The record gives the reactivity of an RNA of 177 nucleotides to DMS and 2A3. For DMS the reverse transcriptase was MarathonRT.
RNA sequence: GGGAACGACUCGAGUAGAGUCGAAAAAGCUUCGUAGUCGAGAGGGAAACAGCCCAGAUCGCCGGCUAAGGCCCCUAAGCGUGUACUAAGUGGAAAAGGAUGUGGGGUCGCGAAGACAACCAGGAGGGAAGAAUAUGAUGUUCGCAUCAUAUUCUUCAAAAGAAACAACAACAACAAC
Reactivity to DMS in 0.01 (KOAc 150mM, MgCl2 10mM, bicine 150mM(pH8.5), 24C), signal-to-noise 9, nucleotides 027 to 126: a080g000c010u000u010c030g030u010a070g040u010c020g000a130g020a150g000g010g010a110a090a120c260a160g000c020c000c030a090g010a140u010c070g000c070c030g010g000c040u010a080a100g010g000c010c000c000c010u000a070a090g010c050g010u020g010u010a110c070u010a070a100g010u030g020g010a070a080a100a080g000g010a060u020g010u000g010g010g020g030u010c010g000c030g000a020a040g020a050c050a050a160c030c000a080g020g000a120g020g020
Reactivity to 2A3 in 0.01 (KOAc 150mM, MgCl2 10mM, bicine 150mM(pH8.5), 24C), signal-to-noise 9, nucleotides 027 to 126: a020g030c020u030u020c020g020u020a020g010u030c010g010a010g030a060g140g040g010a060a200a070c060a090g120c010c000c000a050g030a140u090c040g030c070c010g030g000c010u040a070a100g020g000c000c000c000c000u030a070a060g040c040g060u060g020u060a070c050u090a100a140g070u160g080g070a060a070a060a070g110g020a060u090g030u060g090g020g000g000u020c000g000c000g010a010a010g030a060c030a020a030c010c010a020g080g080a050g040g120